Conditions: 150 mM KOAc, 10 mM MgCl2 and 150 mM bicine (pH 8.5), 24 C. Chemical mapping of a 207-nucleotide RNA with 2A3. Reactivities are given for positions 27 through 156. It was measured as part of the RMDB library OK3TST.
[RMDB]
RNA sequence: GGGAACGACUCGAGUAGAGUCGAAAAUAAUAAUUGCACCGGUGGUCAAGAAGUUCGUGACCUCCUUUGUGUACAAUCUUUUAAUGGCAUCAAAGUAUUACCUCCUGUGUUGUCAGAGAGUCAGAUCUCUGGCUACACAACCGGUGCUACUGCGGCAGCACAGGUGAGAAUUCGUUCUCACCUGUGCAAAAGAAACAACAACAACAAC
Reactivity to 2A3 in 0.01 (KOAc 150mM, MgCl2 10mM, bicine 150mM(pH8.5), 24C), signal-to-noise 1, nucleotides 027 to 156: u080a000a020u040a020a080u130u070g000c000a000c000c070g020g000u020g000g000u000c010a020a020g100a180a060g170u270u300c160g070u110g010a010c000c000u080c000c000u030u030u040g010u000g000u040a200c010a040a140u040c020u000u260u120u220a110a150u120g080g000c000a040u070c050a230a000a000g050u020a110u090u110a050c000c050u050c000c010u040g000u000g000u000u000g010u000c000a000g010a000g000a010g070u180c090a000g010a300u000c000u010c000u000g000g000c000u040a000c000a000c000a000a000c000c000g000g000u000g010c020u000a010c050u010g110c060g040g030c020a060